[RMDB]
RNA sequence: GGGAACGACUCGAGUAGAGUCGAAAAUGAAAGCUGUGUGAGCGAGGCGGGCGGAGGAUGAGGCCGUGCCCGGGCUCUGGCUGCAGCCGCCCGGGGACACGCCGUGCACCCUCGGGGUCCGGAAAAACUAAGGUGGGACAUUCGUGUCCCACCUUAGAAAAGAAACAACAACAACAAC
Reactivity to DMS in 0.01 (KOAc 150mM, MgCl2 10mM, bicine 150mM(pH8.5), 24C), signal-to-noise 1, nucleotides 027 to 126: u020g060a110a110a130g000c020u000g000u010g010u000g000a090g030c080g000a110g010g040c030g010g030g000c040g010g030a030g000g000a040u010g010a110g010g010c060c070g030u000g000c000c000c000g010g000g000c020u010c210u000g000g000c120u000g030c280a090g010c030c120g000c020c000c010g000g000g000g000a040c000a030c120g010c000c010g020u000g010c030a090c020c000c000u010c060g000g030g010g000u000c030c010g020g000a040a020a090a100a120